RNA sequence: GGGAACGACUCGAGUAGAGUCGAAAAGCUCGUCGUCACGUUGGGCGCAGCGGUUCUUGCCCUGAGCUAUCGGUUAUGGAAACUGCGCCAGGGCGGUACGGCUGGGAUCAUGCGAGACAUCCCGGCACCAUACUAGGACCUUCGGGUCCUAGUAUGGAAAAGAAACAACAACAACAAC
Reactivity to DMS in 0.01 (KOAc 150mM, MgCl2 10mM, bicine 150mM(pH8.5), 24C), signal-to-noise 3, nucleotides 027 to 126: g020c050u000c060g020u010c080g010u000c020a060c090g040u000u000g010g000g000c020g020c020a020g010c030g010g020u000u000c010u010u000g030c040c040c000u000g000a130g020c030u010a150u010c030g000g000u000u000a230u010g000g000a130a060a040c030u000g020c300g010c010c000a030g000g000g030c000g010g010u000a020c040g000g010c010u000g010g000g010a050u010c040a050u000g010c030g000a090g000a030c170a150u000c010c020c010g000g000c160a140
Reactivity to 2A3 in 0.01 (KOAc 150mM, MgCl2 10mM, bicine 150mM(pH8.5), 24C), signal-to-noise 3, nucleotides 027 to 126: g020c010u020c050g060u030c000g030u030c040a030c180g110u090u210g130g000g000c100g000c040a000g000c040g070g030u000u030c020u040u300g000c000c010c010u030g040a100g090c030u060a090u300c050g010g040u070u090a110u200g270g100a180a070a010c000u020g010c010g000c000c000a000g000g000g020c010g000g000u030a030c010g090g030c020u010g000g030g030a080u090c050a030u180g000c010g010a030g010a050c010a060u030c010c000c010g030g000c020a040